[RMDB]
RNA sequence: GGGAACGACUCGAGUAGAGUCGAAAACAAAUCUCACUCCGGGACCAGAGAAGAAGUAUUGGACUAUCUAGCGAAGGAGAGGCGUGGACCUAUUAGAACAAAGAAGGUCCUGAAAACCAUGCUGGAAGUAGUAAAUACCCUUCGGGGUAUUUACUACAAAAGAAACAACAACAACAAC
Reactivity to 2A3 in 0.01 (KOAc 150mM, MgCl2 10mM, bicine 150mM(pH8.5), 24C), signal-to-noise 2, nucleotides 027 to 126: c000a000a160a070u020c010u010c010a080c050u010c020c040g030g030g120a190c030c030a000g030a000g040a200a020g030a110a030g050u110a150u190u230g050g000a040c000u010a030u080c010u010a030g060c040g030a070a000g020g010a060g000a030g020g000c050g070u050g000g010a000c010c020u000a060u010u080a080g160a180a030c070a180a070a000g160a090a020g080g010u030c000c000u010g000a000a000a000a000c020c000a040u060g040c020u010g050g040a100a070
Reactivity to DMS in 0.01 (KOAc 150mM, MgCl2 10mM, bicine 150mM(pH8.5), 24C), signal-to-noise 2, nucleotides 027 to 126: c090a080a200a050u020c020u000c050a140c040u020c040c020g000g000g010a050c040c050a070g010a040g000a150a060g010a090a070g000u020a160u010u010g000g000a140c050u000a080u010c010u010a030g000c060g020a180a110g000g010a080g010a030g000g040c080g010u000g000g010a030c040c020u010a120u010u010a100g010a060a120c240a030a030a050g000a090a110g000g000u000c010c010u000g000a050a050a090a150c080c030a110u000g020c020u020g000g020a120a110